Notes: This 177-nucleotide RNA was probed chemically with 2A3.
RNA sequence: GGGAACGACUCGAGUAGAGUCGAAAAGACUGCGUGCACUUGAGACGAUAUCGAGCCGGAAAUUAAUCGAUAAUGUCUCACGUAGUGGAUACGAUCCGGCAAGUAUCGACUACUUGUGCUCGUAGGACCGUAAUCGGACCUUCGGGUCCGAUUACGGAAAAGAAACAACAACAACAAC
Reactivity to 2A3 in 0.01 (KOAc 150mM, MgCl2 10mM, bicine 150mM(pH8.5), 24C), signal-to-noise 2, nucleotides 027 to 126: g010a000c010u000g000c000g000u030g000c010a000c030u030u000g000a000g000a000c020g050a050u000a000u050c010g000a000g000c000c070g000g060a150a050a000u300u300a040a100u080c020g000a000u020a010a030u120g020u000c000u030c090a050c120g080u030a000g000u010g070g000a000u040a020c030g000a030u020c000c000g000g000c000a050a050g000u000a000u060c010g070a000c000u030a030c030u020u040g000u000g000c000u050c040g000u000a000g000g000a010
Source: RMDB library OK1LIB, as collected in RNAgym. Reactivities are given for positions 27 through 126.